Structure probing data (DMS and 2A3) for a 177-nucleotide construct. For 2A3, 12,367 sequencing reads were counted. Conditions: 150 mM KOAc, 10 mM MgCl2 and 150 mM bicine (pH 8.5), 24 C.

[RMDB]
RNA sequence: GGGAACGACUCGAGUAGAGUCGAAAACAGCAAUUAUUCGUAAUUGCUGAAUGGCGGACCCAGCGCGGAAGGAGCGCGCAGGACUCCUUCGGCGCCUUUUAAUAAGCAGGUACUUCGGUACCUGCAAAGUAUAUUCCAAAUUCGUUUGGAAUAUACUAAAAGAAACAACAACAACAAC
Reactivity to DMS in 0.01 (KOAc 150mM, MgCl2 10mM, bicine 150mM(pH8.5), 24C), signal-to-noise 7, nucleotides 027 to 126: c010a010g010c000a000a010u010u000a010u010u010c170g020u000a010a000u000u000g000c000u000g000a050a060u010g010g020c160g000g010a230c010c010c020a170g010c010g020c000g000g010a020a010g000g000a020g010c080g010c160g020c190a050g000g000a170c010u010c000c000u000u000c010g000g020c010g010c010c030u010u010u000u020a070a140u010a090a120g000c000a010g000g000u000a000c000u000u010c130g030g010u000a000c000c000u000g000c000a000a010
Reactivity to 2A3 in 0.01 (KOAc 150mM, MgCl2 10mM, bicine 150mM(pH8.5), 24C), signal-to-noise 5, nucleotides 027 to 126: c000a000g000c000a010a000u020u020a010u080u150c170g030u050a030a000u010u000g000c010u000g020a020a080u090g050g040c090g040g040a070c000c010c000a010g010c000g000c040g130g000a010a010g000g000a010g010c110g000c040g030c110a030g000g160a110c000u000c000c000u020u000c050g110g000c000g020c000c000u100u220u050u090a210a170u190a130a030g000c000a000g000g000u000a000c000u030u090c200g050g000u000a000c010c000u000g000c000a000a000